[RMDB]
RNA sequence: GGGAACGACUCGAGUAGAGUCGAAAACAAUGAUGAGCAAUUCGCUAUUGCCGCCUAAAAACGGUUAGCCGGGGCUGCUAGAGCCUUGUUACCAAAGAUAGCCGGCGGGGACUUCGGUCCCCGUCGUACAGUCUUGAGGCUUCGGCCUCAAGACUGUAAAAGAAACAACAACAACAAC
Reactivity to 2A3 in 0.01 (KOAc 150mM, MgCl2 10mM, bicine 150mM(pH8.5), 24C), signal-to-noise 2, nucleotides 027 to 126: c080a080a120u170g070a070u150g050a060g070c100a060a130u170u140c040g000c040u040a000u010u160g020c000c000g010c000c000u060a030a030a010a000a010c010g010g010u020u020a020g000c000c010g020g000g000g010c020u030g020c020u020a040g000a000g050c000c000u000u040g050u020u070a030c040c000a000a030a000g080a060u020a010g000c010c040g000g000c010g000g010g010g010a000c010u020u050c200g020g040u000c000c030c000c000g000u000c000g040u000